[RMDB]
Chemical mapping of a 177-nucleotide RNA with DMS and 2A3. For DMS, 12,813 sequencing reads were counted. Conditions: 150 mM KOAc, 10 mM MgCl2 and 150 mM bicine (pH 8.5), 24 C. 2A3 adducts were read by reverse transcription with SuperScript II with manganese. The data come from the RNA Mapping Database (RMDB), library TTRDEL.
RNA sequence: GGGAACGACUCGAGUAGAGUCGAAAAGAUAUGGACGAAGAACUCCGAACUACCUGAUGGGUCGGAAACGACCCUACCAGGCGGAGGGAGUCCUAAGUCAAAAGGUCAGUACUUCGGUACUGACCAACUAUAAAGCAAGGUUCGCCUUGCUUUAUAGAAAAGAAACAACAACAACAAC
Reactivity to DMS in 0.01 (KOAc 150mM, MgCl2 10mM, bicine 150mM(pH8.5), 24C), signal-to-noise 7, nucleotides 027 to 126: g010a110u010a170u000g020g010a010c010g000a220a070g010a060a080c000u000c000c010g010a120a140c050u000a170c000c000u000g000a060u000g000g010g000u000c000g010g000a060a090a150c010g000a010c000c000c010u000a010c090c000a000g000g010c090g010g000a100g010g000g000a040g010u000c000c000u010a030a230g000u010c020a090a060a110a100g010g000u000c000a000g000u000a000c000u000u010c190g030g000u000a000c000u000g000a000c000c000a000a010
Reactivity to 2A3 in 0.01 (KOAc 150mM, MgCl2 10mM, bicine 150mM(pH8.5), 24C), signal-to-noise 5, nucleotides 027 to 126: g020a000u100a060u160g010g000a010c020g130a220a180g050a150a040c010u000c010c000g070a180a150c100u120a100c220c010u010g010a020u040g000g010g000u010c010g020g000a030a060a020c010g000a000c000c000c010u010a010c030c000a000g010g010c000g000g000a010g020g000g010a010g000u000c000c000u020a120a010g040u030c030a010a020a080a160g000g000u010c000a000g000u000a000c000u050u140c300g150g000u000a000c000u010g000a000c000c000a010a000